[RMDB]
Structure probing data (2A3 and DMS) for a 177-nucleotide construct.
Values cover nucleotides 27 to 126.
For DMS, 18,636 sequencing reads were counted.
The data come from the RNA Mapping Database (RMDB), library OK1LIB.
RNA sequence: GGGAACGACUCGAGUAGAGUCGAAAACGCUGGUGCUGAACACGGUUGUCACGCUCUUGUUCGUGUUAUGUUGUGCGGCAAUUGCUUACAUCGCGCUCACCGCACCCCACCGGCCGCGCGUGGCGCAGCUACGCUUACAAUUCGUUGUAAGCGUAGCAAAAGAAACAACAACAACAAC
Reactivity to 2A3 in 0.01 (KOAc 150mM, MgCl2 10mM, bicine 150mM(pH8.5), 24C), signal-to-noise 9, nucleotides 027 to 126: c050g000c030u050g010g000u050g010c070u070g060a060a010c030a020c040g060g010u090u120g050u070c030a020c050g030c010u020c010u070u100g050u160u130c040g030u040g050u130u130a140u150g160u150u050g010u030g030c020g020g000c040a080a120u100u080g010c020u090u130a080c030a160u130c130g000c010g000c060u070c040a040c000c020g000c000a050c000c010c000c000a030c020c020g020g000c000c020g040c000g000c010g050u060g010g000c020g010c010a020
Reactivity to DMS in 0.01 (KOAc 150mM, MgCl2 10mM, bicine 150mM(pH8.5), 24C), signal-to-noise 6, nucleotides 027 to 126: c120g010c030u000g000g010u000g020c080u000g010a070a070c070a060c110g010g010u010u010g010u000c030a070c130g020c040u030c050u010u010g010u000u010c050g000u020g010u000u030a070u020g010u010u010g020u010g010c000g010g020c090a090a100u020u030g010c040u010u030a090c160a080u040c120g010c030g010c050u020c080a170c030c000g010c030a100c030c030c040c040a070c080c060g000g010c080c080g000c090g010c050g020u010g000g010c040g020c090a120

For DMS the reverse transcriptase was MarathonRT. The reactions ran in a buffer of 150 mM KOAc, 10 mM MgCl2 and 150 mM bicine (pH 8.5), at 24 C.